Structure probing data (2A3 and DMS) for a 207-nucleotide construct. For DMS the reverse transcriptase was MarathonRT. Source: RMDB library OK3TST, as collected in RNAgym. For DMS, 1,877 sequencing reads were counted. For 2A3 the reverse transcriptase was SuperScript II with manganese.
[RMDB]
RNA sequence: GGGAACGACUCGAGUAGAGUCGAAAAAUUUUAGGGUCUACUACUGGAGGACUAGUCUUAAGACAGUGGGACAAAAGUUCUUGUGAUUUUCGCCCCUUAAUCAAUAUGCUCAUGUUGACUACCUAUGUGUAAGGCAGUCUAGAGAAGCAGAGAAGAACAUUUUACGUGCUUUCGAGCACGUAAAAUGAAAAGAAACAACAACAACAAC
Reactivity to 2A3 in 0.01 (KOAc 150mM, MgCl2 10mM, bicine 150mM(pH8.5), 24C), signal-to-noise 2, nucleotides 027 to 156: a000u150u150u080u100a010g000g000g000u010c010u040a000c000u000a020c020u150g140g010a010g060g010a020c010u030a030g000u000c030u130u100a140a120g140a180c110a050g040u120g050g070g000a000c020a010a170a050a010g010u020u030c050u050u030g060u020g120a230u000u000u030u180c090g000c000c000c000c000u030u090a040a020u060c010a040a020u050a030u120g000c000u010c080a030u140g060u140u050g130a000c000u010a030c010c000u010a070u080g100u030g070u150a010a000g010g000c000a000g000u000c000u080a010g020a000g000a100a000g010c010a000g000a000g010a150a020g050a060a020
Reactivity to DMS in 0.01 (KOAc 150mM, MgCl2 10mM, bicine 150mM(pH8.5), 24C), signal-to-noise 1, nucleotides 027 to 156: a110u000u000u000u000a080g010g020g010u000c010u010a050c050u000a120c060u010g000g010a140g020g000a120c060u000a090g000u010c050u000u010a070a090g020a070c070a130g020u000g030g050g030a050c040a070a020a070a090g020u000u000c030u000u010g000u000g020a070u000u000u000u000c000g010c010c000c020c000u000u000a090a080u000c000a080a100u000a100u010g020c000u010c060a130u000g020u000u010g020a030c010u000a050c000c000u020a050u000g080u000g020u000a140a050g030g010c010a010g010u000c010u000a120g010a160g010a100a060g000c010a050g020a100g020a070a060g000a120a210